[RMDB]
RNA sequence: GGGAACGACUCGAGUAGAGUCGAAAAUUCUAGUGGCCAGUAGUCAUUAUUGGUUGAUCAUCAGAUGCCACAAGUAGCAAGCUCUCUUGAAGGUUUUUGUAACCACUUGGAAAGCUUUCAAUCACAGGGACUUGGAGGGGUGAUCAUGUGUGGCCCAGAAUGGAAAUUACUUCGGUAAUUUCCAUUCAAAAGAAACAACAACAACAAC
Reactivity to DMS in 0.01 (KOAc 150mM, MgCl2 10mM, bicine 150mM(pH8.5), 24C), signal-to-noise 1, nucleotides 027 to 156: u010u000c090u000a050g000u000g010g000c000c040a180g050u020a090g020u010c050a060u020u010a050u000u000g020g020u000u010g010a060u000c050a000u000c010a050g030a210u010g020c010c030a050c030a030a050g020u000a100g030c080a060a150g000c050u000c000u000c140u020u020g010a100a060g010g050u000u000u000u000u020g010u000a050a130c050c080a110c140u010u000g030g000a090a010a020g010c000u000u000u000c030a070a060u000c090a100c090a120g010g000g000a050c000u000u000g010g010a170g050g000g040g020u000g020a030u010c000a090u020g000u000g000u000g010g010c000c020c050a100
The data come from the RNA Mapping Database (RMDB), library OK3TST. An RNA of 207 nucleotides, treated with DMS and read out base by base. The reactions ran in a buffer of 150 mM KOAc, 10 mM MgCl2 and 150 mM bicine (pH 8.5), at 24 C.